[RMDB]
RNA sequence: GGGAACGACUCGAGUAGAGUCGAAAAGUGAAAGCUCCUUCUCUCGCAAUGUGUAACUCAUGAUUCUCAUUACCCCUGGUUGGAGAGAUCCGGACUAGGAGCCAGGGGGCCUCUGAUUCUGCCAGCCAAAACUGUCGUAAGUUCGCUUACGACAGAACCGUUUUCUACUGUUCGCAGUAGAAAACGGAAAAGAAACAACAACAACAAC
Reactivity to 2A3 in 0.01 (KOAc 150mM, MgCl2 10mM, bicine 150mM(pH8.5), 24C), signal-to-noise 2, nucleotides 027 to 156: g050u050g060a130a040a050g060c020u050c010c000u040u020c020u000c000u030c010g080c080a050a180u110g050u040g020u140a050a030c010u000c040a010u120g100a140u090u040c050u010c040a050u090u170a120c000c000c000c000u010g000g020u010u070g080g010a030g010a020g000a160u000c050c040g000g130a120c100u100a050g060g000a000g000c020c000a000g000g000g000g000g000c010c000u040c010u070g050a160u120u040c030u100g050c000c010a030g030c050c010a050a050a080a140c030u000g000u020c000g010u030a000a000g010u030u090c190g000c090u010u000a000c010g000a010c000a000g000a000a000